[RMDB]
RNA sequence: GGGAACGACUCGAGUAGAGUCGAAAAGACCCGUGAUGGAGGCGGCCGGGAUAGCACAUAUCAGUCGGAUAAUCGUGCAAGUUGAUCGUUUCGGCGGUCUAAUUUGGCGGUGCCAUCAGGAUUUACUCGCACAUUGUGUUCGUUCCCUCGGGGACGAGCAACGUCUUUACUUCGGUAAAGACGUUGCAAAAGAAACAACAACAACAAC
Reactivity to 2A3 in 0.01 (KOAc 150mM, MgCl2 10mM, bicine 150mM(pH8.5), 24C), signal-to-noise 2, nucleotides 027 to 156: g000a040c010c020c000g030u060g020a010u030g000g000a030g120g080c150g030g010c020c050g110g030g010a060u060a040g020c100a040c000a120u000a010u040c070a090g260u220c070g070g000a060u070a190a000u170c080g000u140g170c000a020a010g010u010u000g030a010u010c030g000u010u030u070c210g080g000c030g000g000u020c010u090a000a060u020u020u040g000g020c010g000g000u070g000c000c000a000u020c010a000g000g030a000u070u170u000a050c060u020c020g000c030a030c090a080u120u290g040u010g030u170u030c000g000u000u000c000c000c000u000c030g000g000g000g010a010c030g020a020